Source: RMDB library M2PK90, as collected in RNAgym.
Structure probing data (2A3 and DMS) for a 177-nucleotide construct.
For 2A3 the reverse transcriptase was SuperScript II with manganese.
For DMS, 3,877 sequencing reads were counted.
For 2A3, 16,858 sequencing reads were counted.
Values cover nucleotides 27 to 126.
RNA sequence: GGGAACGACUCGAGUAGAGUCGAAAAACAAAGCGAACGACUCGAGUAGAGUCGAAAAGGGAACGACUCGAGUAGAGUCGAAAAGGGAACGACUCGACUAGAGUCGAACGCAACCCAACCCAAAAAAGCUAAGACUAAAGUUCGCUUUAGUCUUAGCAAAAGAAACAACAACAACAAC
Reactivity to 2A3 in 0.01 (KOAc 150mM, MgCl2 10mM, bicine 150mM(pH8.5), 24C), signal-to-noise 2, nucleotides 027 to 126: a000c010a020a200a000g010c300g010a010a000c010g000a000c000u000c000g000a000g000u010a000g000a000g010u000c000g000a000a020a010a000g000g010g000a020a010c000g000a000c000u000c000g000a020g040u090a010g020a000g000u000c000g010a000a000a000a000g060g010g010a040a050c010g000a000c000u000c010g020a020c050u020a020g000a000g010u000c000g000a000a000c020g000c020a020a070c010c000c020a020a050c000c000c050a070a070a010a020a000a000
Reactivity to DMS in 0.01 (KOAc 150mM, MgCl2 10mM, bicine 150mM(pH8.5), 24C), signal-to-noise 2, nucleotides 027 to 126: a100c130a090a030a060g000c300g040a070a170c000g010a010c020u010c000g000a010g010u010a040g000a010g000u000c000g000a010a000a010a030g000g000g000a060a090c010g000a000c000u000c000g000a060g000u010a080g000a000g000u000c000g010a000a010a090a140g010g000g020a130a260c010g010a030c000u020c000g000a030c000u000a100g010a000g000u000c000g000a010a120c030g000c060a100a160c020c010c020a030a100c010c030c020a000a060a070a090a070a080